The data come from the RNA Mapping Database (RMDB), library M2PK90. The record gives the reactivity of an RNA of 177 nucleotides to DMS and 2A3. For 2A3 the reverse transcriptase was SuperScript II with manganese. For DMS, 625 sequencing reads were counted.

RNA sequence: GGGAACGACUCGAGUAGAGUCGAAAAAUAAAGCACGGCAAGCACAUGAAGCACAUGAAGCAGUACAAGCACAUGAAGCAGUACAAGCACUACAAGCAGUAGAAGCAGCCGUAGCACAUGAAAAAAACCACACUAACAGUUUCGACUGUUAGUGUGGAAAAGAAACAACAACAACAAC
Reactivity to DMS in 0.01 (KOAc 150mM, MgCl2 10mM, bicine 150mM(pH8.5), 24C), signal-to-noise 1, nucleotides 027 to 126: a140u020a010a130a160g030c010a060c040g000g040c040a210a210g000c180a160c050a050u000g030a140a060g030c090a050c050a020u010g000a080a150g040c050a130g010u000a000c100a100a070g000c050a050c080a070u030g040a110a030g000c010a150g000u000a010c090a010a160g090c030a050c050u000a000c060a080a130g000c130a070g010u000a010g060a040a300g000c030a110g010c010c000g000u000a010g020c020a050c090a050u030g010a000a000a020a140a060a060a120
Reactivity to 2A3 in 0.01 (KOAc 150mM, MgCl2 10mM, bicine 150mM(pH8.5), 24C), signal-to-noise 1, nucleotides 027 to 126: a000u180a020a050a000g030c000a000c020g010g040c010a000a110g070c010a060c000a040u080g070a080a040g070c050a030c020a100u030g050a130a020g050c000a000g000u040a020c020a180a060g000c010a010c010a160u160g060a070a020g000c000a010g010u020a020c010a120a030g000c000a000c020u060a030c020a140a080g150c070a030g110u060a000g000a150a000g000c020a000g000c030c000g000u030a040g010c000a020c010a070u140g050a070a020a000a000a000a000a070